[RMDB]
Notes
An RNA of 177 nucleotides, treated with DMS and 2A3 and read out base by base. The RNA was probed in 150 mM KOAc, 10 mM MgCl2 and 150 mM bicine (pH 8.5) at 24 C. Reactivities are given for positions 27 through 126.
RNA sequence: GGGAACGACUCGAGUAGAGUCGAAAAUAGGUGGUAAUGCGUGGUUGGUAUGGAACAGUGCCAUAUUGGCGGUGUUGUCAAGUGGUUUUCGAUAGCAACACACCAUCUCAUAAGCACUUACUGCGCAACCGCUAUGAUAGUUCGCUAUCAUAGCGGUAAAAGAAACAACAACAACAAC
Reactivity to DMS in 0.01 (KOAc 150mM, MgCl2 10mM, bicine 150mM(pH8.5), 24C), signal-to-noise 4, nucleotides 027 to 126: u010a060g000g020u010g000g040u000a060a020u010g020c060g050u020g010g010u000u000g000g020u000a090u010g010g000a070a110c300a110g000u020g010c010c060a070u020a080u000u010g010g030c060g030g010u010g000u020u030g000u000c050a090a100g000u020g000g010u000u010u020u020c050g000a070u010a130g000c020a030a020c030a040c050a170c000c010a010u010c040u010c060a040u010a080a100g000c030a010c110u000u010a030c070u000g020c020g020c100a100
Reactivity to 2A3 in 0.01 (KOAc 150mM, MgCl2 10mM, bicine 150mM(pH8.5), 24C), signal-to-noise 5, nucleotides 027 to 126: u190a030g020g020u000g010g040u040a070a050u060g040c030g020u050g040g030u040u040g050g060u040a060u030g100g040a100a050c040a090g070u050g110c000c000a070u140a250u100u040g020g000c080g090g080u210g060u160u190g040u070c050a020a060g030u040g040g000u060u050u080u130c050g050a050u050a030g020c000a000a030c020a000c000a010c010c000a020u010c080u000c080a070u110a050a080g000c010a020c040u030u030a000c030u030g010c030g000c020a020